[RMDB]
RNA sequence: GGGAACGACUCGAGUAGAGUCGAAAAUGGCUCGGAGACGUAUCAGCCAGUUAACUCGCUAUCCUUCACGCCCGUGCACGAUUGCCCGUCGGAUGAUUGCCGAGUGAACAAAGCGGGAGGUCGUCUGUACAGGACGGAGAUUCGUCUCCGUCCUGUAAAAAGAAACAACAACAACAAC
Reactivity to DMS in 0.01 (KOAc 150mM, MgCl2 10mM, bicine 150mM(pH8.5), 24C), signal-to-noise 3, nucleotides 027 to 126: u010g000g010c030u010c040g010g010a100g010a050c050g000u000a060u010c060a130g000c010c040a120g010u010u010a030a080c040u000c070g020c010u000a050u000c140c160u000u000c020a080c070g020c100c090c040g010u010g040c070a080c120g000a100u000u010g010c000c030c080g020u000c040g000g000a100u010g020a130u000u000g010c040c000g000a100g000u010g010a030a050c120a080a120a120g000c010g010g010g020a080g000g020u000c020g010u000c050u000g000
Reactivity to 2A3 in 0.01 (KOAc 150mM, MgCl2 10mM, bicine 150mM(pH8.5), 24C), signal-to-noise 2, nucleotides 027 to 126: u100g010g010c030u010c090g110g030a040g030a020c000g000u140a040u060c010a010g070c010c000a030g080u090u220a030a030c010u000c030g000c030u020a020u160c030c030u040u060c010a030c060g070c040c090c000g000u100g000c040a020c110g100a110u020u170g060c020c010c020g120u010c010g030g000a080u100g000a040u060u140g000c040c020g010a030g060u080g000a030a020c050a090a060a000g050c030g000g000g030a020g000g010u030c000g010u000c060u040g030